Structure probing data (DMS and 2A3) for a 177-nucleotide construct. The data come from the RNA Mapping Database (RMDB), library OK2TRN.
[RMDB]
RNA sequence: GGGAACGACUCGAGUAGAGUCGAAAAUGACUCGCCUCUGCCUCAAUGGCUGCAGGGCAAUCACCGAUGACGGUGUUUCUGCGCUGACAGCGCUGCGUGAUCUGCAAUCGCUGGAGAUCAGGGACUGGGUAGACGAGGUAUUCGUACCUCGUCUACCAAAAGAAACAACAACAACAAC
Reactivity to DMS in 0.01 (KOAc 150mM, MgCl2 10mM, bicine 150mM(pH8.5), 24C), signal-to-noise 2, nucleotides 027 to 126: u000g000a090c050u000c070g020c050c010u000c000u000g010c150c010u000c060a130a130u010g000g030c020u000g020c010a020g000g000g040c050a050a020u020c000a000c010c010g020a240u010g010a180c020g020g020u000g000u000u000u010c110u000g000c020g000c020u010g000a230c020a030g010c000g010c120u000g010c090g010u010g010a130u000c060u020g000c040a060a110u000c100g010c040u000g010g010a050g000a090u000c020a040g000g010g010a070c110u020g010
Reactivity to 2A3 in 0.01 (KOAc 150mM, MgCl2 10mM, bicine 150mM(pH8.5), 24C), signal-to-noise 2, nucleotides 027 to 126: u100g060a000c000u000c040g000c020c010u000c060u000g050c000c000u000c040a050a120u150g070g000c000u000g000c010a000g000g090g040c010a010a000u030c030a010c010c010g160a160u300g140a090c020g000g000u000g010u050u020u020c090u050g000c180g000c010u040g060a180c030a040g000c000g100c060u050g000c020g000u050g050a130u020c030u090g030c010a030a080u070c070g020c050u040g090g010a070g020a060u060c010a020g050g030g040a010c100u250g070